[RMDB]
RNA sequence: GGGAACGACUCGAGUAGAGUCGAAAAAACCCGUUGAUUGAAAUUGAACCGUCCUGUUAUCGAAAGAUAGGCAGAAGAUACGAAAUGUGUGACCGCAUGGGAAGUAAAGGCAGACCGUGGUUCCCUUAAAAUCGUCGAAUCUUCGGAUUCGACGAAACACUCUAAUGAGGUUCGCCUCAUUAGAGUGAAAAGAAACAACAACAACAAC
Reactivity to 2A3 in 0.01 (KOAc 150mM, MgCl2 10mM, bicine 150mM(pH8.5), 24C), signal-to-noise 2, nucleotides 027 to 156: a000a010c040c000c000g040u050u050g100a300u020u040g040a120a110a040u030u110g030a020a030c040c000g050u020c010c010u020g000u050u000a060u040c020g020a080a080a000g030a050u040a050g100g000c030a000g040a160a040g020a040u070a100c060g050a020a070a150u120g020u020g020u040g060a070c010c040g090c170a060u070g050g000g000a050a020g040u110a150a060a000g020g000c000a030g000a010c000c000g020u010g010g050u010u010c000c000c000u020u040a020a120a040a080u050c010g000u000c000g010a010a000u000c010u000u030c070g000g000a000u000u000c000g000a000c000g000a000a010a000
Reactivity to DMS in 0.01 (KOAc 150mM, MgCl2 10mM, bicine 150mM(pH8.5), 24C), signal-to-noise 2, nucleotides 027 to 156: a080a080c010c000c000g040u000u000g020a120u000u010g010a080a160a090u000u000g000a080a070c040c010g000u010c030c000u000g020u010u000a030u000c050g030a100a110a110g020a060u000a020g030g000c030a010g010a140a120g010a110u000a100c080g020a060a060a070u000g010u010g020u000g000a090c020c040g000c020a080u010g010g010g040a040a130g020u000a020a060a050g020g000c020a090g010a120c000c020g050u000g020g030u000u000c000c000c010u000u020a020a080a100a130u000c010g000u000c000g010a040a020u000c000u000u000c300g030g000a010u000u010c000g000a000c010g000a010a010a110
Chemical mapping of a 207-nucleotide RNA with 2A3 and DMS. The data come from the RNA Mapping Database (RMDB), library M2RFPK. DMS adducts were read by reverse transcription with MarathonRT. The RNA was probed in 150 mM KOAc, 10 mM MgCl2 and 150 mM bicine (pH 8.5) at 24 C. The DMS profile rests on 3,980 reads. The 2A3 profile rests on 936 reads.